[RMDB]
RNA sequence: GGGAACGACUCGAGUAGAGUCGAAAAUCAGAAUCAGGCCGGAGUGUUUAGCGCUCCGUAAACACGGUCGUACAUCCAGCCGGUAGCCUGGUUCCUUGCAUUGAGUGAUUUACGGAGUUUAUAGAGCAAAAGAAAGACCUGUUCGCAGGUCUUUCAACUAAAGUCUUGUGUUCGCACAAGACUUUAGAAAAGAAACAACAACAACAAC
Reactivity to DMS in 0.01 (KOAc 150mM, MgCl2 10mM, bicine 150mM(pH8.5), 24C), signal-to-noise 1, nucleotides 027 to 156: u030c080a020g030a120a070u020c010a010g050g060c000c000g020g010a080g070u000g020u000u000u000a220g000c100g010c010u000c100c010g030u000a030a070a130c100a030c010g020g030u000c050g020u000a040c050a040u030c050c010a130g000c020c000g000g000u000a090g010c050c010u010g030g030u000u010c030c020u030u040g050c080a190u010u000g000a120g020u000g000a130u000u010u010a230c140g030g010a170g010u000u000u000a140u010a160g010a150g020c020a090a040a100a130g000a010a030a020g010a000c000c000u010g000u010u000c210g010c010a020g000g020u000c000u000u000u010c000a010a140
Reactivity to 2A3 in 0.01 (KOAc 150mM, MgCl2 10mM, bicine 150mM(pH8.5), 24C), signal-to-noise 1, nucleotides 027 to 156: u070c030a000g000a040a000u030c000a010g010g010c000c000g040g000a020g010u060g020u090u200u230a080g110c020g000c020u000c070c000g000u020a010a020a000c230a000c050g000g070u070c090g040u090a020c020a240u020c030c010a020g000c020c000g000g010u020a010g000c000c000u000g000g010u000u000c020c000u040u130g030c060a160u070u080g030a090g050u080g020a120u010u220u230a030c130g030g000a010g010u030u050u000a120u030a000g050a020g040c030a120a040a040a020g000a000a000a000g000a000c000c000u020g010u020u020c300g000c060a000g020g000u050c000u000u000u000c000a000a000
Description
An RNA of 207 nucleotides, treated with DMS and 2A3 and read out base by base. The 2A3 profile rests on 458 reads. It was measured as part of the RMDB library M2RFOK. For DMS the reverse transcriptase was MarathonRT. The reactions ran in a buffer of 150 mM KOAc, 10 mM MgCl2 and 150 mM bicine (pH 8.5), at 24 C. High DMS reactivity at an A or C suggests that its Watson-Crick edge is free.